[RMDB]
About this RNA: Chemical mapping of a 170-nucleotide RNA with 2A3 and DMS. Conditions: 150 mM KOAc, 10 mM MgCl2 and 150 mM bicine (pH 8.5), 24 C. Values are in units of 0.01, from 0 to 300, in steps of 10. 2A3 adducts were read by reverse transcription with SuperScript II with manganese. Source: RMDB library 15KLIB, as collected in RNAgym. High 2A3 reactivity points to a flexible backbone, as in loops and unpaired stretches.
RNA sequence: GGGAACGACUCGAGUAGAGUCGAAAACCUCGAGCUUCUUAAUUUUCUUCUUGGCCUUCCGGAGCUCCCUCUCGAGUUCCUCCGCCCUUUUUCUUCCAGACACCCACUGCUCGAGGACGUCCUCCCUCCGGAGGUAGGUUCGCCUACCUCAAAAGAAACAACAACAACAAC
Reactivity to 2A3 in 0.01 (KOAc 150mM, MgCl2 10mM, bicine 150mM(pH8.5), 24C), signal-to-noise 9, nucleotides 027 to 129: c000c000u000c010g020a020g010c020u090u040c030u120u290a220a210u140u110u070u030c050u060u020c020u050u070g040g010c010c010u050u040c060c030g020g000a020g010c020u040c020c010c000u100c020u040c030g030a020g020u030u020c000c000u010c010c010g030c010c000c000u020u050u010u040u020c030u060u020c030c010a030g020a070c020a070c040c020c010a050c050u040g000c000u000c010g010a010g010g020a040c010g030u010c000c000u010c000c000c000u020c010c010g040
Reactivity to DMS in 0.01 (KOAc 150mM, MgCl2 10mM, bicine 150mM(pH8.5), 24C), signal-to-noise 9, nucleotides 027 to 129: c030c000u030c020g030a050g000c030u070u050c050u070u100a130a080u090u060u010u020c040u030u010c060u020u040g000g000c020c050u030u050c070c060g010g030a080g020c060u020c020c030c030u060c030u000c070g030a040g030u020u030c020c020u010c050c040g020c030c030c030u060u020u010u020u020c010u030u000c030c020a130g020a120c110a100c040c020c030a150c070u000g000c010u010c020g010a040g030g010a060c100g020u010c000c020u020c010c020c000u020c010c040g000